Structure probing data (DMS and 2A3) for a 177-nucleotide construct. 2A3 adducts were read by reverse transcription with SuperScript II with manganese. DMS adducts were read by reverse transcription with MarathonRT. The DMS profile rests on 554 reads. High 2A3 reactivity points to a flexible backbone, as in loops and unpaired stretches.

RNA sequence: GGGAACGACUCGAGUAGAGUCGAAAAGGGGCGGUUGCCUCCCAAAAUGUAACGGAGGCGCCCAAAGGUUCCCUCAGCCUGGUUGGCAAUCAGGUGUCGAGUGCAAGUGCACAAGGGAGCUUGACUGAUGUACCGCAUCUUUCGAGAUGCGGUACAUAAAAGAAACAACAACAACAAC
Reactivity to DMS in 0.01 (KOAc 150mM, MgCl2 10mM, bicine 150mM(pH8.5), 24C), signal-to-noise 1, nucleotides 027 to 126: g000g030g000g000c130g010g020u000u000g000c030c020u000c010c020c080a050a100a110a080u000g110u000a080a140c100g000g010a000g010g000c000g000c020c020c020a060a040a020g040g030u000u000c000c000c000u000c090a300g000c050c040u000g010g000u000u000g010g000c100a240a030u000c000a000g000g050u000g010u000c270g000a210g010u000g000c010a260a140g030u010g000c010a000c080a150a090g000g010g000a080g000c040u000u000g000a100c160u000g020
Reactivity to 2A3 in 0.01 (KOAc 150mM, MgCl2 10mM, bicine 150mM(pH8.5), 24C), signal-to-noise 3, nucleotides 027 to 126: g040g030g010g010c040g030g100u230u300g000c010c000u040c000c000c000a050a030a000a040u300g040u160a100a000c040g050g000a010g030g060c020g010c000c000c020a060a030a000g000g000u010u000c010c000c000u020c010a000g000c000c000u020g050g000u030u070g180g000c010a010a030u010c030a000g010g020u010g050u220c080g020a020g040u050g030c030a220a180g090u090g170c000a010c010a040a010g020g000g000a050g000c040u060u070g010a050c080u120g050